[RMDB]
RNA sequence: GGGAACGACUCGAGUAGAGUCGAAAAUGAGGACAGGGAUUUAUCUCUGUUCUGUGCGUGGCUAUAUGCCCAGUCUAGAAUGGUGCUUAUUCAUUCUCUUGUAAGUACUUAAGAAAAAUGUGAUGAACGCCUAGGUAGUGUUCGCACUACCUAGGCGAAAAGAAACAACAACAACAAC
Reactivity to DMS in 0.01 (KOAc 150mM, MgCl2 10mM, bicine 150mM(pH8.5), 24C), signal-to-noise 1, nucleotides 027 to 126: u000g010a050g000g000a000c010a000g000g000g000a000u000u010u020a050u000c000u000c000u000g010u000u000c000u000g020u000g000c100g000u020g010g040c010u090a090u000a160u010g010c010c000c030a160g010u000c080u010a140g000a070a050u000g020g010u000g000c000u000u060a020u000u000c100a040u000u000c110u010c040u020u000g010u000a010a040g030u010a030c060u010u000a050a210g020a000a070a070a040a100u030g010u000g000a130u000g010a110a060
Reactivity to 2A3 in 0.01 (KOAc 150mM, MgCl2 10mM, bicine 150mM(pH8.5), 24C), signal-to-noise 1, nucleotides 027 to 126: u150g110a000g000g000a010c000a000g000g010g030a000u000u060u220a180u140c000u040c000u000g010u000u020c000u020g100u070g030c020g020u080g040g020c030u030a030u020a000u300g000c000c000c010a010g020u000c060u130a070g070a270a120u090g040g000u000g030c000u080u070a050u000u120c050a050u110u000c040u010c020u060u080g020u070a020a000g000u020a000c050u090u130a120a150g210a090a110a000a110a120u230g030u070g110a190u120g070a110a010